[RMDB]
RNA sequence: GGGAACGACUCGAGUAGAGUCGAAAAGAUAUGGAUACUUCAACAGCUGUUGUUCGGAAACGAACACUGCAGACAUGAAGGUCCUAAGUCAAAGUAAUAAAGUACUGUUCGCAGUACUUUAUUACAACCAGUGAAAACGGUUCGCCGUUUUCACUGGAAAAGAAACAACAACAACAAC
Reactivity to 2A3 in 0.01 (KOAc 150mM, MgCl2 10mM, bicine 150mM(pH8.5), 24C), signal-to-noise 1, nucleotides 027 to 126: g000a030u100a040u100g020g010a060u140a300c000u020u000c010a070a110c060a180g090c010u000g000u300u030g010u020u060c000g000g000a040a030a040c010g010a010a010c040a000c010u100g000c010a010g080a100c090a110u100g030a000a000g040g000u020c000c020u010a100a000g000u050c070a240a050a000g020u000a010a010u000a020a000a000g010u000a010c010u000g060u080u250c300g000c150a000g000u020a010c000u000u000u000a000u000u000a000c000a000a020
Reactivity to DMS in 0.01 (KOAc 150mM, MgCl2 10mM, bicine 150mM(pH8.5), 24C), signal-to-noise 1, nucleotides 027 to 126: g000a050u000a300u000g020g040a000u000a100c000u010u000c010a010a100c230a160g060c030u000g000u000u000g000u000u010c020g000g020a080a060a100c030g000a010a000c010a010c270u000g000c010a050g010a160c290a090u000g000a000a010g000g000u010c000c010u000a020a150g000u000c030a060a060a130g000u000a020a000u020a000a020a000g000u000a000c000u000g000u000u030c290g000c010a000g010u000a000c000u000u000u010a000u000u000a010c010a120a080